[RMDB]
RNA sequence: GGGAACGACUCGAGUAGAGUCGAAAAUACCGCAGGUUCGCCUGCGGUAAAAAAAGCGUACUACGACGAGGAGGAACUACCUGCGUUCCCAAAUAGGAACGCCAGGCCUCUACCCACCGUCGUAUCGCAAAAAGUUAGAGCGUUCGCGCUCUAACAAGGUUAUUAGACCUUUCGAGGUCUAAUAACCAAAAGAAACAACAACAACAAC
Reactivity to 2A3 in 0.01 (KOAc 150mM, MgCl2 10mM, bicine 150mM(pH8.5), 24C), signal-to-noise 2, nucleotides 027 to 156: u040a010c010c000g000c000a020g030g070u100u250c300g070c080c030u010g000c000g000g000u020a010a000a000a000a020a010a000g000c020g000u090a050c040u000a000c030g020a000c020g010a020g010g010a000g000g000a120a060c070u120a060c230c000u000g000c010g010u000u010c030c000c000a110a180a120u190a030g000g000a030a000c020g050c130c040a000g000g000c000c000u010c010u060a150c030c000c000a060c000c000g000u000c000g000u030a020u300c100g070c100a000a050a080a000a000g000u010u010a010g000a000g000c020g020u070u050c240g040c010g080c100u000c000u000a000a000c000a000a010